About this RNA: The record gives the reactivity of an RNA of 177 nucleotides to 2A3 and DMS. The RNA was probed in 150 mM KOAc, 10 mM MgCl2 and 150 mM bicine (pH 8.5) at 24 C. For 2A3, 2,614 sequencing reads were counted. For DMS, 17,197 sequencing reads were counted.
[RMDB]
RNA sequence: GGGAACGACUCGAGUAGAGUCGAAAAUGCCUUGGCCUCCCAAAGUGCUGGGAGUACAGACGUGAGCCACCGCGCCCGGCCUAUAUUACUCUUUAUAUCUUUGGCAUGUCAGGAAUAUUGUAGGAUAUGAAGGAUAAUACUUCGGUAUUAUCCUUCAAAAAGAAACAACAACAACAAC
Reactivity to 2A3 in 0.01 (KOAc 150mM, MgCl2 10mM, bicine 150mM(pH8.5), 24C), signal-to-noise 2, nucleotides 027 to 126: u050g010c000c000u000u020g030g050c000c000u010c000c000c000a040a050a000g100u090g060c090u060g000g010g020a010g020u010a020c050a060g080a010c030g080u080g040a050g010c000c000a100c060c050g000c000g000c020c020c010g050g010c000c020u090a080u010a030u090u060a070c020u030c000u030u050u040a110u050a060u100c010u080u050u060g060g010c040a030u050g010u060c010a030g020g080a070a050u110a050u090u110g050u090a060g000g110a040u050a030
Reactivity to DMS in 0.01 (KOAc 150mM, MgCl2 10mM, bicine 150mM(pH8.5), 24C), signal-to-noise 8, nucleotides 027 to 126: u010g000c020c000u000u010g010g000c040c020u010c130c000c010a030a060a080g020u000g010c100u000g010g000g000a030g020u000a030c100a050g010a050c040g020u000g010a100g010c010c020a060c090c080g010c060g000c010c010c010g010g010c030c020u000a030u000a050u010u000a080c040u000c020u010u000u000a070u010a080u020c040u000u000u010g020g010c090a060u000g010u010c040a040g010g010a070a080u000a050u010u000g010u000a100g000g010a070u000a120